[RMDB]
RNA sequence: GGGAACGACUCGAGUAGAGUCGAAAACUGGGUGGGCUUUGAUCCUAUAUGUAGGGCAGGCAAAGUCCUUGUUCCACUCCUUCUUGCAGUGGAUCUUGCCGCUUCUCUGAAAAUGAUUGAAAUGCCCACAGCACUUGCAGAGCAAGCAGAAAAGACACAUUAAUCCACCAUUCGUGGUGGAUUAAUGAAAAGAAACAACAACAACAAC
Reactivity to 2A3 in 0.01 (KOAc 150mM, MgCl2 10mM, bicine 150mM(pH8.5), 24C), signal-to-noise 3, nucleotides 027 to 156: c030u050g070g030g000u010g000g000g030c010u140u100u050g020a010u040c020c040u060a050u030a050u290g160u180a030g040g020g030c100a130g020g000c020a050a050a020g130u060c010c030u020u130g010u020u000c000c000a020c010u060c020c030u130u290c080u160u130g040c080a000g000u010g010g000a020u000c050u010u010g020c010c010g050c090u300u080c010u000c000u020g020a060a070a080a130u090g000a020u030u030g020a030a040a040u130g030c000c000c000a010c000a020g020c000a020c040u030u050g000c000a030g050a040g210c010a020a000g020c020a010g130a080a160a050a000g070a010c080a000
Reactivity to DMS in 0.01 (KOAc 150mM, MgCl2 10mM, bicine 150mM(pH8.5), 24C), signal-to-noise 2, nucleotides 027 to 156: c020u010g010g010g020u010g000g030g060c050u010u000u020g000a100u000c010c050u000a130u000a070u000g020u010a030g030g000g020c080a110g030g010c020a060a020a100g000u000c030c030u030u000g010u000u000c010c020a050c040u010c070c060u000u000c130u000u000g020c040a020g030u010g010g020a020u000c040u000u000g040c040c000g020c020u000u010c020u000c030u030g010a080a090a090a110u000g040a110u000u010g010a050a080a040u010g010c030c000c010a090c030a040g010c020a020c030u000u000g020c030a110g000a170g040c060a060a020g040c000a170g000a100a060a060a050g040a300c060a140
Source information
Chemical mapping of a 207-nucleotide RNA with 2A3 and DMS. The DMS profile rests on 4,452 reads. For 2A3, 1,754 sequencing reads were counted. Reactivities are rounded to 0.1 and cut off at 0 and 3. For 2A3 the reverse transcriptase was SuperScript II with manganese. The reactions ran in a buffer of 150 mM KOAc, 10 mM MgCl2 and 150 mM bicine (pH 8.5), at 24 C.